[RMDB]
RNA sequence: GGGAACGACUCGAGUAGAGUCGAAAAUGGACUCGACCCCGAAGACGGGGCAUCGCCGGAUGUUUUGACGGAAGCCGAGUUCAGGCAAGUGCGCGAGCGCCUGGGAUCGCUUGUGCAGACGGCGCAGAUUUUAAUGCCUGUUCGCAGGCAUUAAAAUAAAAGAAACAACAACAACAAC
Reactivity to 2A3 in 0.01 (KOAc 150mM, MgCl2 10mM, bicine 150mM(pH8.5), 24C), signal-to-noise 7, nucleotides 027 to 126: u050g010g020a020c000u020c030g060a150c000c000c010c020g050a170a050g160a130c060g020g000g020g010c010a080u070c050g040c030c020g070g020a050u060g100u080u090u110u160g090a060c040g020g050a040a010g050c060c020g010a010g000u040u020c010a010g010g050c050a090a100g080u020g050c030g000c000g030a030g020c010g020c030c080u170g020g050g050a080u070c010g000c010u020u030g010u020g020c020a010g010a050c030g010g000c030g000c040a020g010
Reactivity to DMS in 0.01 (KOAc 150mM, MgCl2 10mM, bicine 150mM(pH8.5), 24C), signal-to-noise 5, nucleotides 027 to 126: u020g000g000a030c020u000c010g010a280c030c020c000c010g020a220a130g020a160c120g010g010g000g010c100a010u000c120g020c050c070g030g020a050u020g000u010u000u010u010g010a160c050g000g000a080a080g010c100c010g010a030g000u010u000c000a010g000g020c050a080a110g000u010g000c010g020c030g010a040g010c040g000c120c040u000g020g000g010a120u030c010g010c010u000u000g000u010g000c010a050g010a100c070g020g020c040g010c160a090g000